Conditions: 150 mM KOAc, 10 mM MgCl2 and 150 mM bicine (pH 8.5), 24 C. An RNA of 207 nucleotides, treated with 2A3 and DMS and read out base by base.
[RMDB]
RNA sequence: GGGAACGACUCGAGUAGAGUCGAAAAGCUAUUCACUGGCCUGCCCAUUCCAAGUCGGGAGUUGAGGGUUCGGGCUCGAGCGAAGGCUUGUGGUUCGGGCAUUCUUAGAGCGGAGGAGACUGCGUGAGGCUGGUUUCACAGAGCAGCGUCCACCUCCCAACAGUGGUAGGUUCGCCUACCACUGUUGAAAAGAAACAACAACAACAAC
Reactivity to 2A3 in 0.01 (KOAc 150mM, MgCl2 10mM, bicine 150mM(pH8.5), 24C), signal-to-noise 2, nucleotides 027 to 156: g000c010u050a110u230u180c070a010c080u010g020g000c010c000u030g000c000c000c010a060u100u040c050c020a100a050g110u180c120g060g030g000a070g040u050u090g070a080g020g020g020u100u100c030g020g000g000c010u000c040g040a010g000c060g050a090a000g090g000c000u030u030g050u090g060g030u040u020c050g000g010g000c010a050u090u000c020u050u130a100g010a040g100c050g020g020a000g010g010a030g030a030c060u130g020c050g040u040g020a040g100g000c000u000g030g090u060u180u160c110a140c000a020g060a040g070c020a020g010c030g040u000c030c000a110c020c000u000c020c010
Reactivity to DMS in 0.01 (KOAc 150mM, MgCl2 10mM, bicine 150mM(pH8.5), 24C), signal-to-noise 1, nucleotides 027 to 156: g020c050u000a040u010u000c020a080c040u000g050g010c020c000u020g000c010c020c090a220u040u020c060c020a080a130g020u000c060g030g010g020a100g010u000u010g030a090g040g020g040u020u000c000g020g050g010c010u000c000g000a030g020c020g000a160a140g020g030c020u000u000g010u020g000g030u020u010c050g020g000g010c020a120u000u010c050u000u000a100g030a160g030c030g000g000a120g000g020a300g060a070c070u020g010c010g010u010g010a030g020g010c040u000g010g010u000u000u000c150a100c010a070g000a120g010c000a050g020c020g030u010c010c060a150c020c000u000c020c020